Structure probing data (DMS and 2A3) for a 177-nucleotide construct. It was measured as part of the RMDB libraries RFM100 and RFMREP. 2A3 adducts were read by reverse transcription with SuperScript II with manganese. For 2A3, 521 sequencing reads were counted.
RNA sequence: GGGAACGACUCGAGUAGAGUCGAAAACAUGUGAGGUGACUUUUAGGUUUAUUGCUGUAAUGUGUGAGACCCUCAGCUACGGCGACUGGGGACUAUAAGUUUCAGGAAGGAGGGGGCUAUAACAGGUUAAACCUCCAAAGUUCGCUUUGGAGGUUUAAAAAGAAACAACAACAACAAC
Reactivity to DMS in 0.01 (KOAc 150mM, MgCl2 10mM, bicine 150mM(pH8.5), 24C), signal-to-noise 2, nucleotides 027 to 126: c100a070u000g020u030g030a100g010g010u010g000a090c020u000u010u020u030a060g030g010u020u000u000a120u000u000g010c000u010g000u010a040a070u010g010u000g060u020g000a090g000a240c050c010c020u000c060a060g000c060u000a070c180g030g000c060g000a030c050u020g000g000g020g030a050c030u000a090u020a040a140g000u000u000u000c030a030g000g020a050a050g000g000a060g000g010g010g040g000c090u000a010u020a050a070c150a040g000g030u000
Reactivity to 2A3 in 0.01 (KOAc 150mM, MgCl2 10mM, bicine 150mM(pH8.5), 24C), signal-to-noise 2, nucleotides 027 to 126: c030a030u140g060u050g030a010g060g020u030g050a080c020u000u040u060u040a030g040g140u070u120u100a080u150u220g030c000u000g000u060a130a130u160g050u000g040u040g020a010g050a110c000c000c000u030c050a020g000c010u060a040c030g140g000c000g030a000c050u050g000g000g090g000a000c030u050a070u070a300a000g010u000u030u100c080a100g000g000a020a000g030g010a140g000g040g000g010g000c000u000a000u000a160a030c000a000g040g000u070